An RNA of 177 nucleotides, treated with 2A3 and DMS and read out base by base. For DMS, 2,486 sequencing reads were counted.
RNA sequence: GGGAACGACUCGAGUAGAGUCGAAAAAAAAAAAGAUAUGGAUGGAAUGUGCGAUGUCCACGAAGAACGUAAUCGGAAACGAUUACGGGAGUGGACUACCGCACGAGAGAUCCUAAGUCAAAAAAAACAUGUUUUAAUAGUUCGCUAUUAAAACAUGAAAAGAAACAACAACAACAAC
Reactivity to 2A3 in 0.01 (KOAc 150mM, MgCl2 10mM, bicine 150mM(pH8.5), 24C), signal-to-noise 1, nucleotides 027 to 126: a000a000a010a000a000a040a060g090a080u190a040u190g000g000a000u010g020g030a100a050u110g000u020g000c000g030a010u030g000u000c000c000a000c010g160a230a030g010a070a000c010g000u000a000a010u000c000g030g030a050a070a070c000g010a000u000u020a000c000g030g000g010a010g000u000g000g010a010c000u000a020c000c000g000c000a000c010g010a000g000a000g030a000u000c000c030u030a180a000g060u070c110a090a010a040a000a030a110a050a070
Reactivity to DMS in 0.01 (KOAc 150mM, MgCl2 10mM, bicine 150mM(pH8.5), 24C), signal-to-noise 2, nucleotides 027 to 126: a000a000a050a050a080a070a070g000a020u000a300u010g000g000a010u000g010g000a250a130u010g010u000g000c000g010a020u000g000u000c000c000a010c000g000a100a030g000a090a120c030g000u000a000a000u000c030g000g000a130a050a120c010g010a010u000u010a000c000g000g000g010a060g020u000g000g000a010c000u010a010c050c010g000c000a000c000g010a040g010a300g000a010u010c000c000u000a060a110g010u010c000a000a010a000a070a060a060a060a170

Source: RMDB library TTRDEL, as collected in RNAgym.